[RMDB]
RNA sequence: GGGAACGACUCGAGUAGAGUCGAAAAUCGCCGACCACGGUGUGCAUGGUCGCACCGAGGCUUGUCGCCAGCUCGCGGACCCUGCCCAGCUGCGGCGCGGACACCCCCGCCAGGCCGUCGCCACGGACUGACAUCGAUAGUUCGCUAUCGAUGUCAGAAAAGAAACAACAACAACAAC
Reactivity to DMS in 0.01 (KOAc 150mM, MgCl2 10mM, bicine 150mM(pH8.5), 24C), signal-to-noise 3, nucleotides 027 to 126: u000c060g000c050c040g020a100c010c020a140c000g000g020u000g030u010g040c020a230u010g040g020u000c010g000c000a010c010c010g020a080g000g000c070u010u010g020u000c090g020c110c030a090g010c020u000c050g000c030g010g000a080c030c030c020u000g030c040c000c030a170g010c050u010g020c040g010g010c030g000c050g010g010a090c100a140c060c020c020c010c020g030c060c050a080g000g000c030c020g010u000c080g000c020c050a100c090g010g010a210
Reactivity to 2A3 in 0.01 (KOAc 150mM, MgCl2 10mM, bicine 150mM(pH8.5), 24C), signal-to-noise 2, nucleotides 027 to 126: u050c020g020c040c040g030a060c010c030a020c030g040g000u020g000u010g020c160a300u300g070g120u240c020g020c000a000c010c010g010a030g020g020c030u040u170g030u040c010g020c050c010a030g010c040u050c050g010c030g050g050a090c020c000c000u060g020c000c000c020a040g020c020u060g010c040g010g000c040g010c010g010g040a040c000a120c020c020c000c030c000g030c010c010a030g050g000c000c000g040u050c010g000c020c020a050c010g010g030a040
An RNA of 177 nucleotides, treated with DMS and 2A3 and read out base by base.
As a SHAPE reagent, 2A3 marks flexible, mostly unpaired nucleotides at the ribose 2'-OH.